[RMDB]
RNA sequence: GGGAACGACUCGAGUAGAGUCGAAAACUCACACCACACAACCCACUACUUGCAUGUGAGAGGCAUAGUACUAUAGCUGGUUAUCCUGAAUAUGAAGGGGUACUGAGACAAACUGGGCACCCUAUUAUACAUAUCCCACUUUCGAGUGGGAUAUGUAAAAAGAAACAACAACAACAAC
Reactivity to 2A3 in 0.01 (KOAc 150mM, MgCl2 10mM, bicine 150mM(pH8.5), 24C), signal-to-noise 6, nucleotides 027 to 126: c030u020c000a020c020a030c020c010a030c010a000c010a060a150c020c010c000a020c040u090a030c010u040u070g010c040a090u070g020u110g090a120g000a030g050g070c050a070u050a070g060u090a080c060u100a070u090a070g020c020u020g060g020u090u050a030u070c020c010u040g080a140a060u230a120u280g110a150a040g030g000g010g010u030a050c010u060g050a030g000a120c060a030a170a020c040u030g030g010g000c050a080c010c020c000u010a060u160u070a050
Reactivity to DMS in 0.01 (KOAc 150mM, MgCl2 10mM, bicine 150mM(pH8.5), 24C), signal-to-noise 4, nucleotides 027 to 126: c020u000c030a050c100a090c040c030a050c080a040c130a080a130c030c010c010a090c030u030a070c040u020u020g010c020a010u000g020u030g010a060g000a120g030g040c020a040u010a060g000u020a020c110u020a060u020a060g000c030u010g000g010u020u040a020u020c010c020u000g010a150a060u040a080u050g000a140a200g010g000g010g060u000a050c070u000g000a060g010a060c150a040a070a100c060u010g000g000g030c030a070c020c010c010u000a080u030u030a120
The data come from the RNA Mapping Database (RMDB), library OK1LIB. Structure probing data (2A3 and DMS) for a 177-nucleotide construct. Reactivities are given for positions 27 through 126. The RNA was probed in 150 mM KOAc, 10 mM MgCl2 and 150 mM bicine (pH 8.5) at 24 C.